RNA sequence: GGGAACGACUCGAGUAGAGUCGAAAAAUAAAUAUCAGUUAUAUGACUGACGGAACGUGGAAUUAACCACAUGAAGUAUAACGAUGACAAUGCCGACCGUCUGGGCGUUGCAUCCGCUCCUAAAAAAGAUAUUACCUCUGUUCGCAGAGGUAAUAUCAAAAGAAACAACAACAACAAC
Reactivity to DMS in 0.01 (KOAc 150mM, MgCl2 10mM, bicine 150mM(pH8.5), 24C), signal-to-noise 3, nucleotides 027 to 126: a080u010a030a040a060u010a090u000c060a080g010u010u010a080u000a110u000g010a060c070u000g000a040c040g010g020a190a090c210g010u000g000g010a170a160u000u010a140a150c010c010a000c000a130u010g010a050a140g010u000a020u000a050a050c070g000a020u000g010a080c010a010a010u000g010c020c000g020a130c030c020g010u000c010u010g010g000g000c010g030u010u000g010c020a050u000c020c040g000c040u000c000c020u020a000a050a070a080a060a090
Reactivity to 2A3 in 0.01 (KOAc 150mM, MgCl2 10mM, bicine 150mM(pH8.5), 24C), signal-to-noise 4, nucleotides 027 to 126: a000u070a000a070a000u200a030u060c020a010g030u060u060a180u040a090u300g100a040c030u020g010a010c020g030g010a130a030c070g010u010g020g040a120a120u220u080a200a110c000c010a000c030a020u080g060a060a010g080u090a040u030a160a040c040g000a000u020g060a040c010a010a030u040g000c000c010g040a090c020c020g090u040c030u020g090g000g010c010g010u030u020g010c010a020u010c000c020g010c010u040c010c000u090a110a090a000a000a000a000